[RMDB]
RNA sequence: GGGAACGACUCGAGUAGAGUCGAAAAUAUUUUUGGUUCUCCCACAGUGCCUAGUCCAGAGCAGCGCACAUGAAGGAACCCAAUUCAUUGCUGUUGAAGUUUAUGAAUUACAGUUUGUAUAGGAGCCACGUGACAUGCAUAUGUUAGCUGUACCCUACCUAAUAAAUGACUUCGGUCAUUUAUUAGGAAAAGAAACAACAACAACAAC
Reactivity to DMS in 0.01 (KOAc 150mM, MgCl2 10mM, bicine 150mM(pH8.5), 24C), signal-to-noise 2, nucleotides 027 to 156: u000a090u000u010u000u010u030g020g000u010u000c040u010c000c020c020a120c060a110g000u000g000c010c010u000a130g020u040c060c110a150g010a130g030c020a060g020c090g040c070a050c030a080u000g010a090a080g000g030a070a100c050c010c080a070a070u010u000c080a080u000u000g000c020u020g030u000u000g010a110a290g010u000u000u000a050u030g010a050a070u000u000a080c080a130g000u000u000u010g000u010a090u000a060g030g030a080g020c050c000a040c100g020u000g040a060c040a000u000g030c090a090u000a080u000g030u000u000a090g050c010u000g000u010a100c050c010c020u000a200
Reactivity to 2A3 in 0.01 (KOAc 150mM, MgCl2 10mM, bicine 150mM(pH8.5), 24C), signal-to-noise 4, nucleotides 027 to 156: u110a040u020u140u040u050u050g040g000u040u040c050u030c000c030c000a070c010a030g020u020g020c010c010u070a080g050u100c050c070a020g010a050g070c040a000g010c040g010c050a020c010a040u080g070a080a060g040g010a010a010c010c000c030a030a010u020u030c020a030u010u060g010c020u020g040u120u130g080a030a010g030u060u210u160a070u040g040a080a020u080u050a060c030a040g030u010u110u090g040u090a060u060a080g010g070a040g080c060c020a030c080g040u090g050a030c020a060u070g030c040a040u100a020u180g030u050u060a040g000c030u030g030u070a040c010c010c000u050a090
Structure probing data (DMS and 2A3) for a 207-nucleotide construct. For DMS, 3,952 sequencing reads were counted. Reactivities are rounded to 0.1 and cut off at 0 and 3. The reactions ran in a buffer of 150 mM KOAc, 10 mM MgCl2 and 150 mM bicine (pH 8.5), at 24 C.